[RMDB]
The data come from the RNA Mapping Database (RMDB), library OK3TST. Chemical mapping of a 207-nucleotide RNA with 2A3. Reactivities are given for positions 27 through 156. 2A3 is a SHAPE reagent: it acylates the 2'-hydroxyl of flexible nucleotides of all four kinds. The reactions ran in a buffer of 150 mM KOAc, 10 mM MgCl2 and 150 mM bicine (pH 8.5), at 24 C. 2A3 adducts were read by reverse transcription with SuperScript II with manganese.

RNA sequence: GGGAACGACUCGAGUAGAGUCGAAAACGAUCUGUUCGCAGAUCGAGCUACGGAGACGUAGCAAAGCGAGCGAGGGCACGGGCGCUCGCACUACCGGAAAUAUACCCAUAUCCACGUGUGCUAGGAUAUGGCCGUGCCCAAAGAAACAGCACACGAAAGCUACGGGAUUAUUCGUAAUCCCGUAGCUAAAAGAAACAACAACAACAAC
Reactivity to 2A3 in 0.01 (KOAc 150mM, MgCl2 10mM, bicine 150mM(pH8.5), 24C), signal-to-noise 2, nucleotides 027 to 156: c000g000a000u010c010u030g010u120u050c170g010c090a000g000a000u000c000g020a040g010c000u000a000c000g000g050a130g030a040c020g000u020a000g000c070a060a000a000g020c000g010a020g000c000g010a030g000g000g000c000a000c020g050g070g000c000g050c000u000c000g040c000a000c020u130a090c050c040g250g160a000a090a000u300a060u110a060c020c000c000a000u010a000u020c010c010a030c180g030u000g000u010g000c000u010a080g000g050a020u010a000u020g000g000c000c010g000u000g000c020c000c000a100a120a010g090a040a100a020c130a020g000c010a000c020a000c070g040a070a110